RNA sequence: GGGAACGACUCGAGUAGAGUCGAAAAGAUAUGGACUACCCACCUUUGAGGUGCGAUGAAAUUAGUCGGAAACGACUAAUGGAGCAUGUAGAAGAGGUCCUAAGUCAAACCAGCCUUCGGGCUGGAACCAUAAUUCUACGUUCGCGUAGAAUUAUGGAAAAGAAACAACAACAACAAC
Reactivity to 2A3 in 0.01 (KOAc 150mM, MgCl2 10mM, bicine 150mM(pH8.5), 24C), signal-to-noise 7, nucleotides 027 to 126: g010a000u100a060u130g000g000a000c010u170a210c030c010c000a050c020c010u050u030u080g140a170g040g050u000g010c060g260a300u040g030a010a020a010u000u010a000g000u010c000g010g020a060a070a030c010g000a000c000u010a000a010u010g010g000a000g000c010a030u300g030u070a010g000a070a000g030a030g030g010u000c000c010u030a300a030g090u060c070a050a060a110c000c000a000g000c010c010u090u150c300g100g000g000c000u000g010g000a000a000
Reactivity to DMS in 0.01 (KOAc 150mM, MgCl2 10mM, bicine 150mM(pH8.5), 24C), signal-to-noise 7, nucleotides 027 to 126: g010a070u000a140u000g000g000a020c010u000a150c020c010c010a300c100c000u000u000u000g010a170g000g010u000g000c010g000a100u010g010a110a060a020u000u000a010g000u000c000g000g010a100a090a120c010g010a020c000u000a000a000u000g000g000a060g010c000a010u010g000u010a230g000a020a010g000a120g010g000u000c000c000u010a070a120g010u000c050a110a100a210c000c000a010g000c000c000u000u010c220g030g010g000c010u000g000g000a020a030

Chemical mapping of a 177-nucleotide RNA with 2A3 and DMS. For 2A3 the reverse transcriptase was SuperScript II with manganese. It was measured as part of the RMDB library TTRDEL. Conditions: 150 mM KOAc, 10 mM MgCl2 and 150 mM bicine (pH 8.5), 24 C.